[RMDB]
RNA sequence: GGGAACGACUCGAGUAGAGUCGAAAACGAGAACUCGAAGGCCGUCCACGAGAUCGGCGUGGCGACGCCUUACCUCGGAAUGGUCGAGAGGCUGGCGAAGAAGUUCGGGAUCAAGAUGCCUUUUGCGAAACUGAACUUUAACGGCGCAGCGGAGCCGACGUUCGUUAACGUUCGCGUUAACGAACGUAAAAGAAACAACAACAACAAC
Reactivity to 2A3 in 0.01 (KOAc 150mM, MgCl2 10mM, bicine 150mM(pH8.5), 24C), signal-to-noise 2, nucleotides 027 to 156: c030g010a020g050a080a010c050u070c050g040a130a030g000g000c020c020g000u060c050c010a110c080g040a030g030a160u110c030g030g000c000g040u010g120g010c150g040a060c050g000c000c000u010u030a040c010c000u000c020g000g030a060a090u070g000g020u070c000g020a010g000a010g140g000c030u030g070g040c070g010a050a050g050a020a000g080u020u000c020g010g000g000a040u040c010a000a020g070a130u260g040c040c000u100u120u060u170g040c040g000a000a000a020c030u030g010a000a000c000u040u000u010a110a060c020g070g000c100g000c060a050g100c000g060g040a020g010c000c000g060
Reactivity to DMS in 0.01 (KOAc 150mM, MgCl2 10mM, bicine 150mM(pH8.5), 24C), signal-to-noise 2, nucleotides 027 to 156: c010g000a050g010a070a170c020u000c040g000a250a080g000g090c000c010g010u000c000c030a200c020g030a090g000a030u030c300g070g030c000g030u030g000g020c200g000a150c030g070c000c010u000u010a010c010c020u000c000g010g000a030a070u000g040g030u010c060g000a300g010a060g010g050c030u000g050g010c050g000a150a230g010a010a030g000u000u000c040g050g030g040a290u000c050a040a300g020a090u000g010c170c130u000u000u000u020g020c300g000a130a090a270c010u030g020a040a010c010u000u010u020a150a290c020g070g000c000g050c060a060g020c030g000g010a290g000c050c010g020